[RMDB]
RNA sequence: GGGAACGACUCGAGUAGAGUCGAAAAUCUCGGCAUGUCAGCUUUGUGAAGCAGGUAGAAAUUGAACAGUCAACCUUAGUUUGACUAAUAACUAAGCCAGGGAAAUUAGAAAAAUCCAGGAACUGAGUGUAACAAUAUCAUUCGUGAUAUUGUUACAAAAAGAAACAACAACAACAAC
Reactivity to DMS in 0.01 (KOAc 150mM, MgCl2 10mM, bicine 150mM(pH8.5), 24C), signal-to-noise 9, nucleotides 027 to 126: u000c000u000c020g020g020c080a070u010g020u000c050a060g020c050u000u000u010g020u010g010a080a080g020c040a050g010g010u000a060g010a060a090a100u010u000g010a090a150c150a050g000u000c020a050a050c090c100u000u000a070g010u000u000u000g000a150c060u000a060a050u010a040a100c050u000a060a070g010c070c040a070g010g010g000a040a070a070u010u010a080g010a020a090a060a060a050u000c030c080a070g010g000a080a070c060u000g000a100g020
Reactivity to 2A3 in 0.01 (KOAc 150mM, MgCl2 10mM, bicine 150mM(pH8.5), 24C), signal-to-noise 6, nucleotides 027 to 126: u020c010u000c000g030g040c070a070u090g030u070c030a000g010c030u050u120u130g090u080g050a040a010g010c040a020g060g000u070a060g100a070a160a140u080u150g040a100a030c010a050g020u020c010a010a030c020c050u070u100a050g020u020u030u050g010a010c010u020a040a130u060a070a000c040u010a030a030g010c020c010a030g030g000g010a050a080a050u100u060a060g090a020a130a040a000a010u030c030c010a010g020g040a050a040c060u060g030a030g130